[RMDB]
About this RNA:
The record gives the reactivity of an RNA of 207 nucleotides to DMS and 2A3. It was measured as part of the RMDB library M2RFPK. The 2A3 profile rests on 2,594 reads. The reactions ran in a buffer of 150 mM KOAc, 10 mM MgCl2 and 150 mM bicine (pH 8.5), at 24 C. DMS (dimethyl sulfate) methylates the pairing face of unpaired adenines and cytosines. High 2A3 reactivity points to a flexible backbone, as in loops and unpaired stretches.

RNA sequence: GGGAACGACUCGAGUAGAGUCGAAAAGUUCCCUCUUAGCGUGGAGGUUUAACUACGCUCGUUCCCCAUAUCGGUGUGGGCGCACCUGAUUUAUAAAUCAAAGUCCUUUAGGGAACGGAAAGGAACAAAAAUCCAUGGGAGUUCGCUCCCAUGGAAACUGAAGUACUAAGUUCGCUUAGUACUUCAGAAAAGAAACAACAACAACAAC
Reactivity to DMS in 0.01 (KOAc 150mM, MgCl2 10mM, bicine 150mM(pH8.5), 24C), signal-to-noise 3, nucleotides 027 to 156: g010u000u000c020c000c000u000c050u000u000a060g010c010g080u010g020g010a110g020g010u000u000u020a100a170c020u000a010c000g030c000u010c000g000u000u000c020c000c000c050a180u000a070u000c040g010g020u010g000u010g020g020g030c080g030c020a060c020c030u010g010a060u000u000u010a110u010a060a090a140u000c030a110a090a180g000u000c020c030u000u000u000a060g030g010g030a080a080c020g010g000a050a090a060g000g010a060a130c040a030a100a070a120a140u000c000c000a020u000g020g020g010a040g050u000u000c300g000c010u000c000c010c000a000u000g000g000a000a010a030
Reactivity to 2A3 in 0.01 (KOAc 150mM, MgCl2 10mM, bicine 150mM(pH8.5), 24C), signal-to-noise 2, nucleotides 027 to 156: g010u010u030c000c000c000u000c020u000u020a010g010c010g010u000g010g020a050g010g090u090u170u090a050a070c020u020a000c010g010c010u000c010g000u000u000c000c000c000c020a030u070a030u130c030g000g000u020g010u010g020g060g010c050g020c030a000c000c010u000g020a030u040u230u080a190u140a100a120a030u130c130a000a040a060g000u010c020c000u010u040u090a080g010g000g010a000a040c050g020g020a060a080a020g070g000a070a010c030a040a120a040a000a030u000c000c000a000u000g010g000g010a020g010u050u060c100g070c080u000c000c000c000a000u000g000g020a000a000a000